RNA sequence: GGGAACGACUCGAGUAGAGUCGAAAAACUAUAAGCAGAGAUGUGUGCUCCAAAGUAGAGCAGCAGGGUUCUGUGAGAGUGAAGAGCAGAGGAUGCUGGCCUAGGCUAGAGGGCCAGGGAGCGCUUCCCCAAGGAGGCACCACUGAAGCCGAGAUGCACGAUUGGUAGAAUUCGUUCUACCAAUCGUAAAAGAAACAACAACAACAAC
Reactivity to DMS in 0.01 (KOAc 150mM, MgCl2 10mM, bicine 150mM(pH8.5), 24C), signal-to-noise 2, nucleotides 027 to 156: a130c020u010a080u010a130a230g040c000a070g000a100g010a100u000g030u000g030u010g000c000u010c010c030a080a120a200g030u020a070g000a100g020c010a160g000c030a040g020g020g030u000u000c020u000g000u000g010a210g010a080g020u000g010a060a080g010a070g040c030a110g020a120g020g010a090u000g030c000u000g020g000c010c010u000a110g000g010c030u000a030g010a080g000g010g000c030c010a070g000g010g000a060g000c100g010c050u000u000c030c010c090c090a090a170g000g000a090g040g060c010a050c030c020a130c060u010g000a100a100g020c000c040g010a090g000a050u000g000c110
Reactivity to 2A3 in 0.01 (KOAc 150mM, MgCl2 10mM, bicine 150mM(pH8.5), 24C), signal-to-noise 2, nucleotides 027 to 156: a000c130u140a110u080a190a030g010c030a030g030a030g010a120u030g040u040g090u060g020c020u000c000c030a190a180a060g090u140a090g070a000g000c000a000g010c000a020g140g010g000u120u080c030u020g040u090g010a040g000a000g030u120g060a050a050g000a020g010c030a020g020a020g080g020a030u120g010c020u020g000g000c020c020u020a050g070g000c000u030a030g030a080g110g000g000c000c010a010g020g010g010a070g050c040g000c030u030u010c010c000c000c020a000a070g030g000a010g010g000c020a010c040c000a060c030u060g050a050a030g000c000c040g050a050g050a030u150g060c120

Source information: An RNA of 207 nucleotides, treated with DMS and 2A3 and read out base by base. The reactions ran in a buffer of 150 mM KOAc, 10 mM MgCl2 and 150 mM bicine (pH 8.5), at 24 C. It was measured as part of the RMDB library OK3TST.